[RMDB]
Source: RMDB library OK2TRN, as collected in RNAgym.
This 177-nucleotide RNA was probed chemically with DMS and 2A3.
The reactions ran in a buffer of 150 mM KOAc, 10 mM MgCl2 and 150 mM bicine (pH 8.5), at 24 C.
For DMS, 2,927 sequencing reads were counted.
Reactivities are given for positions 27 through 126.
The 2A3 profile rests on 4,506 reads.
RNA sequence: GGGAACGACUCGAGUAGAGUCGAAAACAACGUGCUGCUCGCCUACGAGAUGAACGGCGAGGCGCUGACUCCCGCGCACGGCGCACCGCUGCGGGCCAUCGUGCCCGGCUGGUACGGCAUGGCGGCGGAUGAAGCUCGAAUUCGUUCGAGCUUCAUCAAAAGAAACAACAACAACAAC
Reactivity to DMS in 0.01 (KOAc 150mM, MgCl2 10mM, bicine 150mM(pH8.5), 24C), signal-to-noise 3, nucleotides 027 to 126: c100a110a160c140g010u010g000c020u000g000c010u010c290g000c020c030u000a190c030g000a110g000a060u000g000a100a220c160g000g000c000g000a100g000g010c030g010c000u000g010a120c080u000c020c000c020g040c090g020c070a150c060g000g000c020g020c020a050c020c000g000c040u010g010c030g030g010g020c010c010a120u020c300g000u000g010c020c010c010g000g010c010u000g010g040u010a030c110g000g000c000a120u000g000g000c040g010g030c070g000
Reactivity to 2A3 in 0.01 (KOAc 150mM, MgCl2 10mM, bicine 150mM(pH8.5), 24C), signal-to-noise 3, nucleotides 027 to 126: c010a040a000c030g110u090g040c000u020g000c000u020c040g010c010c010u030a050c070g120a040g030a300u280g100a270a080c020g020g000c000g000a030g020g010c000g000c000u030g010a070c050u070c030c020c010g010c010g000c010a040c000g000g000c000g030c010a010c010c000g040c030u120g020c050g000g000g040c020c000a300u250c100g070u280g010c000c010c010g010g000c010u030g030g000u040a050c100g020g000c020a030u110g030g000c010g020g000c010g040